Notes: Source: RMDB library OK3TST, as collected in RNAgym. The record gives the reactivity of an RNA of 207 nucleotides to DMS and 2A3. The reactions ran in a buffer of 150 mM KOAc, 10 mM MgCl2 and 150 mM bicine (pH 8.5), at 24 C. For 2A3 the reverse transcriptase was SuperScript II with manganese. Values cover nucleotides 27 to 156. High 2A3 reactivity points to a flexible backbone, as in loops and unpaired stretches.

RNA sequence: GGGAACGACUCGAGUAGAGUCGAAAAGCCAUAGCCAUGGAAAGAAAGAGUGAUAGGGCUGGCUGUCACACUGGGCCACCCCAAGUCAAAAUACAUUGAAAUAUGCUGUUUUCUAGUAAGGGACUGUAGUCUGUUGUGCCAGAGUGGACUUCCAUUGCGAAUUUUUGAUAUUCGUAUCAAAAAUUCGAAAAGAAACAACAACAACAAC
Reactivity to DMS in 0.01 (KOAc 150mM, MgCl2 10mM, bicine 150mM(pH8.5), 24C), signal-to-noise 1, nucleotides 027 to 156: g030c000c040a110u000a130g020c000c010a060u100g050g030a080a070a100g000a090a070a070g010a130g050u020g020a090u010a090g020g000g000c080u000g030g020c040u000g040u000c030a060c060a080c120u010g010g010g010c020c020a090c000c000c000c000a020a180g000u000c050a070a070a050a100u000a080c070a050u000u010g010a090a120a110u010a090u010g010c030u020g020u000u010u000u000c030u010a110g010u000a100a110g000g020g030a080c060u020g030u000a060g030u010c060u010g000u000u000g030u000g000c010c030a110g000a070g020u000g020g000a110c090u010u000c000c010a230u000u010g000
Reactivity to 2A3 in 0.01 (KOAc 150mM, MgCl2 10mM, bicine 150mM(pH8.5), 24C), signal-to-noise 1, nucleotides 027 to 156: g050c020c000a030u090a000g000c040c000a030u030g020g020a050a070a030g060a040a120a010g070a030g060u130g020a060u060a060g050g000g070c060u020g000g020c020u030g020u110c030a030c020a010c070u090g010g030g010c010c000a030c020c010c010c010a090a000g060u020c040a000a000a050a110u120a030c030a100u050u170g080a030a060a050u160a030u110g040c040u000g040u070u000u080u000c020u020a030g000u050a040a080g010g030g030a030c040u070g050u070a040g010u000c080u060g080u090u040g030u050g010c020c000a010g000a010g020u040g010g030a050c020u070u050c030c030a090u020u100g030